The record gives the reactivity of an RNA of 177 nucleotides to 2A3 and DMS. The data come from the RNA Mapping Database (RMDB), library OK2TRN. The RNA was probed in 150 mM KOAc, 10 mM MgCl2 and 150 mM bicine (pH 8.5) at 24 C.
[RMDB]
RNA sequence: GGGAACGACUCGAGUAGAGUCGAAAACGGGGAUACUGUGAAUGAAGUGUAGAAGCCGUUAUCUGCGUUGGCGUUACCUAUUAUCAUUGCAUAAGGGCCGAACGUGAAACUGUUACUUCCUCCGGCGGCUAUUAACUAAUUUCGAUUAGUUAAUAGCAAAAGAAACAACAACAACAAC
Reactivity to 2A3 in 0.01 (KOAc 150mM, MgCl2 10mM, bicine 150mM(pH8.5), 24C), signal-to-noise 7, nucleotides 027 to 126: c030g000g000g000g030a020u080a150c040u100g040u080g220a060a140u090g020a060a040g040u040g030u210a090g040a160a010g030c010c000g020u050u020a140u090c040u070g010c010g020u020u040g040g000c030g050u070u090a090c000c010u030a100u120u050a040u080c100a130u030u300g050c030a020u040a100a050g010g040g000c030c050g050a030a010c010g020u020g050a070a020a000c020u020g030u120u080a030c000u070u000c010c000u000c010c010g070g030c030g060
Reactivity to DMS in 0.01 (KOAc 150mM, MgCl2 10mM, bicine 150mM(pH8.5), 24C), signal-to-noise 9, nucleotides 027 to 126: c050g010g000g000g010a130u010a040c060u000g010u010g010a100a110u010g010a070a060g010u000g010u000a080g010a140a180g010c030c030g010u000u000a080u010c050u000g020c040g020u000u000g000g010c050g010u000u010a130c060c030u000a070u000u000a050u000c040a140u000u010g020c120a030u010a040a040g010g010g010c060c040g000a020a030c040g010u000g000a060a060a080c060u000g000u000u000a080c070u000u000c010c060u000c050c030g010g020c160g010